This 177-nucleotide RNA was probed chemically with 2A3 and DMS. For 2A3 the reverse transcriptase was SuperScript II with manganese. Reactivities are given for positions 27 through 126. The DMS profile rests on 8,144 reads. The reactions ran in a buffer of 150 mM KOAc, 10 mM MgCl2 and 150 mM bicine (pH 8.5), at 24 C.

RNA sequence: GGGAACGACUCGAGUAGAGUCGAAAAUCCUCAGAGGUGGCUCCGGCCUCGCUAGCGACCCCCUCACCCCCAGGGAAGAAACACAUUCUGGUGCUUAGCGAGCUGCGCGCCGAGGACGCCGGUGAAGGCGUAGGCGUAUAUUCGUAUACGCCUACGCAAAAGAAACAACAACAACAAC
Reactivity to 2A3 in 0.01 (KOAc 150mM, MgCl2 10mM, bicine 150mM(pH8.5), 24C), signal-to-noise 2, nucleotides 027 to 126: u000c000c000u000c010a030g070a040g060g050u040g040g020c010u020c020c010g020g000c000c020u000c000g020c020u020a020g030c030g220a130c000c010c010c000c030u020c080a200c000c010c010c000c000a000g010g000g000a090a070g060a060a080a000c160a000c010a140u110u030c040u090g030g000u030g000c010u020u040a010g020c000g010a010g010c010u060g010c090g010c000g020c020c010g000a010g010g010a020c000g000c000c000g000g050u110g050a090a010g080
Reactivity to DMS in 0.01 (KOAc 150mM, MgCl2 10mM, bicine 150mM(pH8.5), 24C), signal-to-noise 8, nucleotides 027 to 126: u010c000c000u000c110a070g010a190g010g030u000g010g010c020u000c040c020g000g000c030c020u000c030g010c020u000a020g010c020g010a160c150c060c020c000c010u020c070a300c030c000c000c010c040a180g000g000g010a130a060g010a060a070a100c150a070c190a130u010u010c110u000g020g030u000g010c020u010u000a030g010c010g010a100g010c230u000g010c130g020c290g010c010c010g010a040g000g000a040c030g010c010c010g000g000u000g010a100a100g010